[RMDB]
Structure probing data (2A3 and DMS) for a 177-nucleotide construct. Values cover nucleotides 27 to 126. The 2A3 profile rests on 803 reads. The RNA was probed in 150 mM KOAc, 10 mM MgCl2 and 150 mM bicine (pH 8.5) at 24 C. For 2A3 the reverse transcriptase was SuperScript II with manganese.
RNA sequence: GGGAACGACUCGAGUAGAGUCGAAAAGAUCAGAAUGGAACCGUAGGCAAUCGCUACACCGUAUUCGCCAUCUUCCACGCGGUUGAGGAUGUAAGCCGUCGCUACGCGGGUAUCCGGCGUGACGAGGCCAUGACCACCUGUUCGCAGGUGGUCAUGGAAAAGAAACAACAACAACAAC
Reactivity to 2A3 in 0.01 (KOAc 150mM, MgCl2 10mM, bicine 150mM(pH8.5), 24C), signal-to-noise 1, nucleotides 027 to 126: g040a150u060c040a020g280a300a060u110g020g070a020a080c090c070g000u020a100g020g120c030a010a030u140c030g000c100u090a030c020a000c040c010g000u080a160u050u050c000g020c040c020a050u000c050u110u000c040c040a100c040g070c010g100g130u050u100g020a020g000g000a040u040g090u050a090a000g020c030c000g070u050c000g000c030u030a040c060g030c010g000g000g110u170a110u080c040c010g070g040c070g030u060g000a010c050g020a020g000g010
Reactivity to DMS in 0.01 (KOAc 150mM, MgCl2 10mM, bicine 150mM(pH8.5), 24C), signal-to-noise 2, nucleotides 027 to 126: g010a100u000c040a080g020a120a210u010g010g000a000a050c020c070g000u000a130g020g020c040a080a040u000c180g010c040u010a050c100a030c070c000g020u000a090u020u000c100g040c040c030a070u000c090u000u010c040c030a030c170g020c100g020g000u010u000g000a050g010g000a080u010g030u000a070a070g000c020c010g000u010c050g030c010u000a020c130g050c010g020g000g010u000a100u010c040c020g010g000c110g000u000g010a030c020g010a100g000g000